[RMDB]
RNA sequence: GGGAACGACUCGAGUAGAGUCGAAAACGACCUCCUGACGGGUCGGACAUAGCGUCAGGAUCAUCCGUGCCAGUCACCACGGUAAUCAUGUGUCUGAUGAUGGUUUUCCAUCUUAAUCUGACUGAGUCGUAGCAGUCUACAGUACUAUGACAUUAGACAGUACGACUGCUUUCGAGCAGUCGUACUGAAAAGAAACAACAACAACAAC
Reactivity to 2A3 in 0.01 (KOAc 150mM, MgCl2 10mM, bicine 150mM(pH8.5), 24C), signal-to-noise 1, nucleotides 027 to 156: c000g000a010c000c000u020c000c000u090g000a000c000g000g000g000u010c050g050g020a020c090a060u090a000g020c000g000u000c000a000g000g000a010u170c050a050u000c000c000g040u000g020c020c000a010g000u010c000a000c000c000a000c020g050g100u040a060a020u040c000a000u110g020u000g000u030c000u000g030a090u050g000a000u000g000g000u000u080u260u180c000c000a000u020c000u080u230a130a090u090c240u160g000a010c000u020g000a020g030u020c010g040u000a000g000c000a000g000u020c100u090a110c040a040g020u030a040c010u000a000u030g000a000c000a030u030u030a130g090a020